[RMDB]
RNA sequence: GGGAACGACUCGAGUAGAGUCGAAAAGGCAUUCUGAAGACCUGAAGUCUAGGCAACGUACGGGAGACGUAGUUCUUCAAUCACAUGACGCCUAGGGGAAAGUCCCCGGAUCUCGGGUAGAAAGUGCACAUAAUCGGCCGUUCGCGGCCGAUUAUGUAAAAGAAACAACAACAACAAC
Reactivity to 2A3 in 0.01 (KOAc 150mM, MgCl2 10mM, bicine 150mM(pH8.5), 24C), signal-to-noise 1, nucleotides 027 to 126: g100g000c080a060u050u000c050u050g010a010a000g050a090c000c000u000g010a020a020g050u010c000u010a000g000g000c060a080a000c040g010u040a020c120g050g000g000a000g070a040c120g090u060a010g050u230u000c000u000u000c000a000a130u110c040a040c000a080u130g070a040c030g020c000c000u030a030g020g000g000g040a080a030a250g040u110c000c000c000c000g000g030a030u000c000u030c030g040g020g000u000a020g000a030a200a000g010u090g010c000
Reactivity to DMS in 0.01 (KOAc 150mM, MgCl2 10mM, bicine 150mM(pH8.5), 24C), signal-to-noise 1, nucleotides 027 to 126: g020g000c020a010u000u070c020u080g010a130a200g050a010c040c000u000g000a030a050g000u000c030u000a030g010g000c050a270a300c120g020u000a150c300g000g000g000a000g000a020c030g090u000a010g000u080u000c000u000u000c020a020a140u120c300a060c080a030u030g010a140c280g000c000c000u000a020g000g000g000g000a020a100a130g000u050c000c000c000c120g000g000a090u030c120u000c020g000g000g030u000a000g000a110a000a140g030u000g000c070

Chemical mapping of a 177-nucleotide RNA with 2A3 and DMS. For 2A3 the reverse transcriptase was SuperScript II with manganese. The DMS profile rests on 938 reads. The data come from the RNA Mapping Database (RMDB), library RFM100.